Structure probing data (2A3 and DMS) for a 177-nucleotide construct. Conditions: 150 mM KOAc, 10 mM MgCl2 and 150 mM bicine (pH 8.5), 24 C. The DMS profile rests on 13,665 reads.
RNA sequence: GGGAACGACUCGAGUAGAGUCGAAAAGCUGAGUAUACGAGGUUAGUUCAUUCUCGUAUGCAUGAUUGGACAAAUUAAAAACUCAAUUUGGAUCAGGGCCUCCCUCCAGCGACGGCCGAACAUACAACAGUGAGUAGUUAUUCGUAACUACUCACUGAAAAGAAACAACAACAACAAC
Reactivity to 2A3 in 0.01 (KOAc 150mM, MgCl2 10mM, bicine 150mM(pH8.5), 24C), signal-to-noise 6, nucleotides 027 to 126: g000c020u040g030a010g040u010a000u000a000c010g000a010g030g050u140u160a060g100u210u280c070a050u220u040c010u000c010g010u010a010u010g010c010a070u080g020a070u040u130g040g020a010c010a010a030a040u090u120a080a160a100a140a040c070u060c150a020a040u040u010u030g090g040a180u090c040a050g020g020g020c010c000u010c010c000c000u040c030c010a010g000c000g020a020c020g020g000c010c010g010a020a010c030a030u190a030c030a070a000
Reactivity to DMS in 0.01 (KOAc 150mM, MgCl2 10mM, bicine 150mM(pH8.5), 24C), signal-to-noise 9, nucleotides 027 to 126: g010c020u000g010a170g020u000a010u000a010c010g000a010g010g000u000u000a110g010u010u010c200a080u010u010c000u000c010g010u000a010u000g010c010a090u000g000a070u000u010g000g000a070c020a020a020a030u000u010a040a050a090a110a100c270u010c120a020a040u000u000u000g010g000a110u000c030a070g010g000g000c010c000u000c010c010c020u000c120c010a020g010c030g000a080c170g010g010c020c020g010a030a040c090a050u010a130c210a030a100